Description:
This 177-nucleotide RNA was probed chemically with DMS and 2A3. For DMS, 672 sequencing reads were counted. It was measured as part of the RMDB library M2PK90. Values are in units of 0.01, from 0 to 300, in steps of 10. The 2A3 profile rests on 1,324 reads.
[RMDB]
RNA sequence: GGGAACGACUCGAGUAGAGUCGAAAAUGAAAUAAAGCGCACCAAGAUGCAGGUGCGCAACCAGCGUGUCCAUGGAUCACGCAUCCACGCGUCUACCAAGACGCGAAAGGUAUUACAAAUAAAAAAAUCAGAAUUGUUAGUUCGCUAACAAUUCUGAAAAAGAAACAACAACAACAAC
Reactivity to DMS in 0.01 (KOAc 150mM, MgCl2 10mM, bicine 150mM(pH8.5), 24C), signal-to-noise 1, nucleotides 027 to 126: u000g000a160a090a130u020a040a110a110g020c000g000c000a000c000c040a140a130g000a140u000g020c190a140g040g010u000g010c000g000c000a000a000c070c110a090g000c030g010u000g030u030c040c020a150u010g030g010a010u000c000a000c030g000c000a040u000c050c030a190c020g010c000g030u000c000u000a070c300c160a090a040g000a000c040g000c000g020a000a080a080g000g000u010a030u010u010a120c120a050a060a120u090a070a040a000a100a010a070a070
Reactivity to 2A3 in 0.01 (KOAc 150mM, MgCl2 10mM, bicine 150mM(pH8.5), 24C), signal-to-noise 2, nucleotides 027 to 126: u040g010a020a100a020u080a080a080a030g000c000g020c000a000c010c020a040a050g160a100u230g130c080a020g080g000u000g030c010g000c010a000a000c020c010a030g000c050g000u010g060u020c080c110a120u190g070g020a060u160c010a000c010g000c020a020u070c000c010a040c000g030c010g000u080c000u000a140c020c070a060a000g040a000c010g000c010g000a030a010a010g000g010u000a050u020u040a080c050a000a080a100u300a110a190a040a000a000a000a070